[RMDB]
RNA sequence: GGGAACGACUCGAGUAGAGUCGAAAACAGUUCAAUACCGUGAUCGAGGCUAUUGCGUACCAGGUGGGUCAGCGGGUCGAUAAUGCGUUCUAUCAGGCUUUUGUCGAGUUCAGUAGAACUGCCCACAGAAAAUUAAUUACUUCGGUAAUUAAUUUUCAAAAGAAACAACAACAACAAC
Reactivity to 2A3 in 0.01 (KOAc 150mM, MgCl2 10mM, bicine 150mM(pH8.5), 24C), signal-to-noise 2, nucleotides 027 to 126: c000a010g050u120u100c020a070a080u040a120c030c050g050u080g040a030u100c060g050a020g100g000c050u060a050u070u180g030c020g040u020a080c000c020a080g130g120u080g040g040g010u070c000a020g070c050g030g000g080u020c020g010a040u080a140a020u150g020c040g040u040u000c020u030a060u090c040a020g110g010c020u030u090u100u130g090u140c040g010a010g020u170u080c050a030g020u010a000g040a040a030c040u020g040c010c000c010a020c010a020
Reactivity to DMS in 0.01 (KOAc 150mM, MgCl2 10mM, bicine 150mM(pH8.5), 24C), signal-to-noise 3, nucleotides 027 to 126: c060a080g010u000u010c130a120a100u000a050c040c030g010u000g000a130u010c050g010a100g000g000c060u000a020u010u010g020c100g030u000a070c070c030a120g010g010u010g000g010g000u000c030a090g010c070g020g010g000u010c060g020a080u010a080a090u000g000c020g000u000u000c070u010a040u000c090a210g000g010c020u000u000u000u020g010u020c200g010a080g010u000u000c040a220g010u000a050g010a030a050c010u000g010c010c020c020a070c230a160